Structure probing data (DMS) for a 177-nucleotide construct. For DMS, 755 sequencing reads were counted.

[RMDB]
RNA sequence: GGGAACGACUCGAGUAGAGUCGAAAACGCCUCCUUUACCGGUUCCCAAUCGGAGUCCUUAGAGCCACGUUCCACGUCGUCGAUCUCGUUGCGCGACAGGGUAAACGGAACCCGUAGCCGGACAAGGCAAUUCCCAACCGUUCGCGGUUGGGAAUUGAAAAGAAACAACAACAACAAC
Reactivity to DMS in 0.01 (KOAc 150mM, MgCl2 10mM, bicine 150mM(pH8.5), 24C), signal-to-noise 1, nucleotides 027 to 126: c170g000c070c010u020c010c040u010u000u010a210c050c040g010g000u000u000c010c010c040a140a140u000c080g000g010a140g000u000c020c040u000u010a050g030a220g010c000c050a220c010g000u000u010c030c010a210c050g000u000c000g020u000c020g000a110u000c120u000c160g020u000u010g030c050g010c020g000a010c020a100g020g010g020u020a030a150a100c160g000g010a090a020c060c040c020g020u000a110g030c000c000g020g050a160c300a060a050g010g000
The RNA was probed in 150 mM KOAc, 10 mM MgCl2 and 150 mM bicine (pH 8.5) at 24 C.